Chemical mapping of a 207-nucleotide RNA with DMS and 2A3. It was measured as part of the RMDB library OK3TST. For DMS, 2,972 sequencing reads were counted. For 2A3, 5,376 sequencing reads were counted. The RNA was probed in 150 mM KOAc, 10 mM MgCl2 and 150 mM bicine (pH 8.5) at 24 C.

[RMDB]
RNA sequence: GGGAACGACUCGAGUAGAGUCGAAAACAAUUAUCUUAUAAUGCCUUACCAUAUAUGGUUUGCUCCGGUAGCAGGAAAGAUCGACAUAACUUCAACACCCGUUGAUCAUUUAACAUUCGAUAUAGUUAUGCUUCCCACUUCACAUGAAGGGAAACCGGAUCCUAGAUGAAUUCGUUCAUCUAGGAUCAAAAGAAACAACAACAACAAC
Reactivity to DMS in 0.01 (KOAc 150mM, MgCl2 10mM, bicine 150mM(pH8.5), 24C), signal-to-noise 2, nucleotides 027 to 156: c020a050a120u000u000a090u000c040u000u000a130u000a140a100u000g010c000c020u010u000a070c050c010a170u010a120u000a100u020g050g010u000u000u010g000c040u000c040c050g020g020u000a160g000c020a080g000g000a100a090a030g010a070u000c010g060a040c000a030u000a030a020c050u010u000c110a050a170c040a220c080c090c060g060u000u010g030a100u000c090a060u000u000u000a080a060c060a130u000u000c060g000a140u000a120u000a060g010u000u000a010u000g000c030u010u020c010c020c010a070c070u000u010c040a080c130a060u010g010a080a020g030g020g000a040a040a140c020c050g020
Reactivity to 2A3 in 0.01 (KOAc 150mM, MgCl2 10mM, bicine 150mM(pH8.5), 24C), signal-to-noise 8, nucleotides 027 to 156: c030a020a090u180u080a090u130c040u070u220a110u100a240a080u120g010c000c010u030u040a020c010c040a030u080a030u050a080u300g050g020u050u030u090g050c050u040c040c020g060g000u050a020g000c030a010g040g060a060a060a030g020a030u050c040g050a050c000a030u080a060a030c030u080u080c050a070a040c040a120c070c080c080g020u020u020g030a060u060c040a070u040u120u150a120a090c100a080u110u180c070g070a040u050a010u050a170g020u050u040a030u070g020c040u020u000c000c000c010a050c030u070u070c050a070c020a170u200g040a040a060g030g020g020a100a010a000c020c000g040